[RMDB]
RNA sequence: GGGAACGACUCGAGUAGAGUCGAAAAGUAGACACUGGGGGUCCAGUGGUAGUCAGGCCAGUGAUAGUGAGGGACAUUCAGAAGAGUCAGACACACAGUCAGUGUCAGGCCAUGGACAGGCUGGGCCGCCUUGCUAUGGGUUCGCCCAUAGCAAGGCAAAAGAAACAACAACAACAAC
Reactivity to 2A3 in 0.01 (KOAc 150mM, MgCl2 10mM, bicine 150mM(pH8.5), 24C), signal-to-noise 1, nucleotides 027 to 126: g080u060a030g020a070c010a000c060u010g000g070g000g000g000u000c010c030a010g000u000g060g110u050a070g010u050c040a010g000g070c010c000a040g030u040g050a060u030a040g060u030g060a110g070g030g040a060c050a070u040u100c040a110g120a300a020g070a120g060u000c030a010g000a090c000a000c000a000c040a060g120u110c030a000g030u030g000u100c050a030g000g000c010c000a050u100g000g000a000c000a020g150g000c060u040g000g000g040c070c020
Reactivity to DMS in 0.01 (KOAc 150mM, MgCl2 10mM, bicine 150mM(pH8.5), 24C), signal-to-noise 2, nucleotides 027 to 126: g020u000a100g020a120c060a100c070u000g000g020g010g050g010u020c020c000a010g020u000g020g020u000a070g020u000c040a110g000g030c000c020a120g030u000g010a040u000a110g020u000g010a140g030g000g000a030c040a110u000u000c160a110g000a130a130g000a160g000u000c010a130g010a160c000a050c050a090c100a220g000u010c070a010g000u000g000u000c060a090g020g000c000c010a060u010g010g010a010c020a060g010g010c000u010g010g000g000c010c030